The data come from the RNA Mapping Database (RMDB), library 15KLIB. An RNA of 170 nucleotides, treated with DMS and 2A3 and read out base by base. For 2A3 the reverse transcriptase was SuperScript II with manganese. As a SHAPE reagent, 2A3 marks flexible, mostly unpaired nucleotides at the ribose 2'-OH.
RNA sequence: GGGAACGACUCGAGUAGAGUCGAAAAAAAUAAAAGCCCUGUUGUUUAGCGUAUCGUUGCACUUGUCUGGUGGGAUUGUGGCAUUAAUUUGCCUGCUCAUCUAGGCAGUGGACAUAUGCUCAACACUCGAGCCUCUUCUUCGGAAGAGGCAAAAGAAACAACAACAACAAC
Reactivity to DMS in 0.01 (KOAc 150mM, MgCl2 10mM, bicine 150mM(pH8.5), 24C), signal-to-noise 1, nucleotides 027 to 129: a100a160a170u100a060a020a180a090g020c040c000c010u080g040u000u180g110u000u030u000a040g040c040g060u030a000u000c160g000u020u030g040c000a040c060u050u000g080u000c030u000g070g030u000g000g110g000a060u040u080g060u030g040g010c000a000u030u000a160a140u000u000u020g010c010c030u100g050c000u020c000a020u000c050u050a100g020g020c020a020g000u020g040g010a020c000a070u040a060u000g010c000u000c140a050a030c040a040c030u020c040g000a300
Reactivity to 2A3 in 0.01 (KOAc 150mM, MgCl2 10mM, bicine 150mM(pH8.5), 24C), signal-to-noise 1, nucleotides 027 to 129: a000a000a000u300a010a030a000a000g000c000c020c000u020g150u090u060g000u000u000u000a000g000c010g000u000a000u070c060g060u010u030g120c000a000c000u080u030g010u000c000u000g000g000u000g010g000g000a060u070u070g070u020g070g020c080a000u000u000a190a110u000u090u000g000c030c030u010g020c000u000c010a150u020c000u010a000g000g000c000a020g000u000g000g000a090c000a000u000a000u000g000c000u000c040a030a030c010a000c000u040c070g020a060